[RMDB]
RNA sequence: GGGAACGACUCGAGUAGAGUCGAAAAGUCACCUCUAUUCAAAACGGCACUGACGCAAGUAAUGAGUACAGCCCGAACCAUAGGUAUAGACUUGAUUGGGACUGUCGUCAGUUUGGACGGUGUGUACUCAUUGCGCUAACUUCGGUUAGCGCAAUGAAAAAGAAACAACAACAACAAC
Reactivity to DMS in 0.01 (KOAc 150mM, MgCl2 10mM, bicine 150mM(pH8.5), 24C), signal-to-noise 2, nucleotides 027 to 126: g020u010c060a060c060c030u000c050u000a080u020u010c090a040a060a110a080c170g000g000c120a080c040u000g010a030c070g010c140a110a100g000u010a050a050u000g010a060g000u000a020c010a060g000c010c010c010g010a050a040c050c020a040u000a040g000g010u010a120u010a090g020a070c020u000u010g000a070u000u000g010g000g000a070c080u000g000u000c040g030u000c020a050g010u000u000u000g010g010a100c070g000g000u000g030u010g010u000a030c070
Reactivity to 2A3 in 0.01 (KOAc 150mM, MgCl2 10mM, bicine 150mM(pH8.5), 24C), signal-to-noise 2, nucleotides 027 to 126: g050u040c020a100c050c020u010c060u130a130u150u060c090a020a070a080a080c050g000g050c030a020c070u110g020a020c030g000c010a090a000g040u080a080a090u070g040a000g020u040a000c030a010g020c030c030c000g050a100a100c100c000a050u070a100g000g080u110a100u120a150g090a010c000u030u040g060a060u130u100g100g000g000a070c030u060g040u070c010g000u020c000a030g000u070u100u040g030g000a000c000g000g030u070g030u030g020u040a000c000
Description: Chemical mapping of a 177-nucleotide RNA with DMS and 2A3. The reactions ran in a buffer of 150 mM KOAc, 10 mM MgCl2 and 150 mM bicine (pH 8.5), at 24 C. DMS adducts were read by reverse transcription with MarathonRT.